[RMDB]
RNA sequence: GGGAACGACUCGAGUAGAGUCGAAAAGAUAUGGAAAUGAUCAGGCGACGAAGUGGGUCAGGUCGGAAACGACCUGAGCCCACAGAGCCUGGCAUUUCCUAAGUCAAACUCGCGGUUCGCCGCGAGAGAUGAAUACUGACUUCGGUCAGUAUUCAUCAAAAGAAACAACAACAACAAC
Reactivity to 2A3 in 0.01 (KOAc 150mM, MgCl2 10mM, bicine 150mM(pH8.5), 24C), signal-to-noise 2, nucleotides 027 to 126: g010a000u040a010u080g000g070a000a000a000u110g080a300u200c000a000g020g060c020g090a240c160g170a300a130g020u000g020g020g000u000c000a000g000g000u010c000g000g000a060a030a010c000g010a000c000c010u010g000a020g020c010c000c000a000c000a000g000a010g010c000c000u000g010g020c000a000u000u000u000c010c000u000a040a000g020u000c030a040a090a100c010u000c000g000c000g000g110u060u090c300g040c160c000g000c000g000a000g000a010
Reactivity to DMS in 0.01 (KOAc 150mM, MgCl2 10mM, bicine 150mM(pH8.5), 24C), signal-to-noise 4, nucleotides 027 to 126: g000a040u000a300u010g000g000a010a010a010u000g000a110u010c000a020g000g010c000g010a250c220g020a150a130g010u000g020g010g000u010c000a010g020g010u000c010g020g010a060a100a180c030g000a010c000c000u000g000a080g020c000c000c000a000c010a020g000a170g010c010c010u010g000g000c010a000u000u010u010c000c010u010a010a070g010u000c040a150a130a210c010u000c010g000c000g010g010u000u020c300g010c000c000g020c010g010a010g010a040